An RNA of 177 nucleotides, treated with DMS and 2A3 and read out base by base.
RNA sequence: GGGAACGACUCGAGUAGAGUCGAAAAUGAAAUUAUGCACAGCUAAGGCAGCUGAUCUUCAGCCAGACAGAUGGAGAGAUCACUGGCUUACGUAAUUGGAAAUGCGCCUGCGGGUUUUGGGAUGCAAAAAUGGGAUCGUAUUCGUACGAUCCCAUUUAAAAGAAACAACAACAACAAC
Reactivity to DMS in 0.01 (KOAc 150mM, MgCl2 10mM, bicine 150mM(pH8.5), 24C), signal-to-noise 4, nucleotides 027 to 126: u040g000a120a060a040u000u010a010u010g030c160a050c150a110g000c110u000a040a030g000g010c020a010g030c140u000g020a020u010c020u020u020c110a050g000c030c010a050g020a210c270a080g000a110u010g000g010a150g020a010g000a040u000c000a040c000u020g000g000c000u010u000a030c090g030u020a050a060u010u020g020g010a070a110a090u010g010c030g030c030c030u000g000c080g000g000g000u030u000u040u010g010g000g000a060u020g000c090a040a020
Reactivity to 2A3 in 0.01 (KOAc 150mM, MgCl2 10mM, bicine 150mM(pH8.5), 24C), signal-to-noise 3, nucleotides 027 to 126: u130g030a020a030a050u220u160a090u090g040c080a030c020a060g070c080u010a000a030g060g010c000a000g070c160u020g000a010u030c040u040u080c090a080g030c030c000a050g100a240c100a080g190a140u080g020g030a050g030a020g010a050u000c010a000c000u010g020g080c000u000u030a020c060g000u040a010a080u070u030g100g050a010a030a130u110g000c040g000c010c020u050g010c050g040g050g000u040u010u060u100g090g000g010a040u060g060c030a150a000
Reactivities are given for positions 27 through 126. 2A3 adducts were read by reverse transcription with SuperScript II with manganese. DMS adducts were read by reverse transcription with MarathonRT. The RNA was probed in 150 mM KOAc, 10 mM MgCl2 and 150 mM bicine (pH 8.5) at 24 C. It was measured as part of the RMDB library OK1LIB.